The record gives the reactivity of an RNA of 207 nucleotides to 2A3. Values are in units of 0.01, from 0 to 300, in steps of 10. The RNA was probed in 150 mM KOAc, 10 mM MgCl2 and 150 mM bicine (pH 8.5) at 24 C. 2A3 is a SHAPE reagent: it acylates the 2'-hydroxyl of flexible nucleotides of all four kinds. The data come from the RNA Mapping Database (RMDB), library M2RFPK.

RNA sequence: GGGAACGACUCGAGUAGAGUCGAAAAGAUUCCUCGUUGUUGAGCGAGGUUUAAACAAAUCGACCACACAAACGUAGAGCCGACUACGGAUUUAUAAAUUAGGGCAUUAAGUGUGAUAAGGAGACAAAAAACGAUGUUGUGUUCGCACAACAUCGAACAAUGCUUUCCGGUUCGCCGGAAAGCAUUGAAAAGAAACAACAACAACAAC
Reactivity to 2A3 in 0.01 (KOAc 150mM, MgCl2 10mM, bicine 150mM(pH8.5), 24C), signal-to-noise 2, nucleotides 027 to 156: g060a080u130u100c000c010u030c010g010u010u020g020u020u010g000a010g020c020g000a000g070g020u090u110u030a000a030a000c060a000a000a020u000c010g030a040c020c000a010c000a000c010a090a300a000c010g000u020a030g000a010g130c000c010g080a090c010u010a000c010g010g010a050u010u170u010a140u080a060a080a040u090u150a040g000g010g010c040a010u140u090a140a050g000u010g020u000g070a020u060a080a070g070g000a100g010a040c110a080a120a020a000a020a020c020g000a010u000g010u000u000g030u000g050u040u040c220g100c060a000c000a000a000c000a000u000c010g000a000a000

Record summary: The 2A3 profile rests on 630 reads. 2A3 adducts were read by reverse transcription with SuperScript II with manganese.